[RMDB]
RNA sequence: GGGAACGACUCGAGUAGAGUCGAAAAAGCGCUAUACGUAGCGCAAAAGCAUAAUGGAUCAGGUAGAACGGAAAAGUUUUACCGGGCUCUUAUGAGCAGCAGGAUUAUAAACCUGUGGGACCGUGAAACUCCUUUCAUGUUUCGACAUGAAAGGAGUAAAAGAAACAACAACAACAAC
Reactivity to DMS in 0.01 (KOAc 150mM, MgCl2 10mM, bicine 150mM(pH8.5), 24C), signal-to-noise 2, nucleotides 027 to 126: a050g010c000g000c000u020a010u020a130c180g030u000a020g000c020g030c020a030a010a050a130g020c090a060u000a080a030u020g010g000a070u000c010a080g000g010u010a020g000a000a000c010g000g000a100a130a110a180g000u000u000u010u000a000c000c000g000g020g020c030u000c010u010u000a070u020g000a010g030c060a230g000c000a020g000g000a130u020u060a090u030a090a170a090c010c000u000g020u010g010g000g010a080c040c030g000u020g000a070a040
Reactivity to 2A3 in 0.01 (KOAc 150mM, MgCl2 10mM, bicine 150mM(pH8.5), 24C), signal-to-noise 5, nucleotides 027 to 126: a000g020c010g010c020u020a020u000a040c300g130u040a030g000c010g000c010a000a050a030a000g080c050a080u090a110a060u200g040g050a130u040c020a020g020g000u000a000g010a020a000c030g110g210a190a090a010a080g030u000u000u000u000a000c000c000g000g010g000c010u010c020u130u300a160u300g010a000g010c020a010g010c000a000g000g010a020u130u090a120u300a220a170a080c000c000u010g000u020g040g020g000a010c000c000g000u000g000a040a030